[RMDB]
Annotation: Source: RMDB library OK2TRN, as collected in RNAgym. Structure probing data (DMS and 2A3) for a 177-nucleotide construct. The DMS profile rests on 869 reads. Conditions: 150 mM KOAc, 10 mM MgCl2 and 150 mM bicine (pH 8.5), 24 C.
RNA sequence: GGGAACGACUCGAGUAGAGUCGAAAAUAAAUGCCGAUGAUGUCUGCGUCGAGCAUCCAAAUCUCCACGGACGGAUCGUCGCUGCUGAUUUGGUACAGGUUGUACAGCUCCCGUCCGCCGACAGCGCGUGUCCAGAGUGUUUCGACACUCUGGACACAAAAGAAACAACAACAACAAC
Reactivity to DMS in 0.01 (KOAc 150mM, MgCl2 10mM, bicine 150mM(pH8.5), 24C), signal-to-noise 1, nucleotides 027 to 126: u010a030a120a070u000g020c030c020g030a040u000g000a120u000g040u000c220u000g000c010g020u000c000g000a150g010c030a060u000c020c060a040a070a120u000c040u000c050c130a120c090g010g000a020c060g030g000a180u000c050g020u000c040g040c030u020g030c040u000g000a070u000u000u020g000g040u000a050c020a130g010g020u010u010g000u000a080c040a040g010c020u000c030c010c000g000u020c030c040g000c050c040g000a100c070a040g000c050g010c090
Reactivity to 2A3 in 0.01 (KOAc 150mM, MgCl2 10mM, bicine 150mM(pH8.5), 24C), signal-to-noise 1, nucleotides 027 to 126: u080a010a110a020u030g020c000c010g020a020u030g010a080u070g080u090c050u120g070c020g020u020c000g070a060g040c020a020u010c020c000a120a170a050u020c020u000c030c020a030c050g000g000a020c040g020g000a160u030c150g080u020c110g010c040u020g030c020u040g030a190u070u160u250g120g010u120a050c030a070g030g220u300u180g100u170a020c000a000g020c010u050c000c000c000g000u050c020c040g030c060c040g040a060c060a020g040c070g000c040